[RMDB]
RNA sequence: GGGAACGACUCGAGUAGAGUCGAAAACCAGCUUCCACUCUUUCGCUCACACGCACGGCGCCUCCCCCACAGUUCUCCGAUUCCAAUUUUCCGCAAGGAAUGUCAUCGCGACCGCCCCGCCGGUGUCGUCAUACUAUCAGUUCGCUGAUAGUAUGACAAAAGAAACAACAACAACAAC
Reactivity to DMS in 0.01 (KOAc 150mM, MgCl2 10mM, bicine 150mM(pH8.5), 24C), signal-to-noise 3, nucleotides 027 to 126: c000c010a140g000c070u000u000c030c040a080c080u000c050u000u000u000c080g020c050u000c040a090c100a120c110g010c060a090c100g000g010c090g000c010c010u000c010c000c010c000c030a070c110a090g010u000u000c010u000c020c020g000a110u000u000c020c040a080a090u020u000u010u000c010c000g000c200a090a150g010g000a020a030u000g010u000c060a020u000c040g000c040g000a060c060c060g010c030c020c010c010g020c050c030g010g020u000g010u000c120
Reactivity to 2A3 in 0.01 (KOAc 150mM, MgCl2 10mM, bicine 150mM(pH8.5), 24C), signal-to-noise 1, nucleotides 027 to 126: c000c000a020g020c030u060u030c030c000a070c030u080c000u080u090u080c040g010c010u010c020a080c010a010c050g030c020a010c030g040g000c030g060c050c000u030c020c020c000c000c020a020c020a010g010u050u020c020u010c000c010g040a050u080u020c020c000a030a030u080u020u070u030c000c000g000c060a020a040g040g020a040a000u030g030u010c020a020u060c050g020c000g060a050c050c030g040c000c000c000c010g020c020c020g000g000u030g050u050c040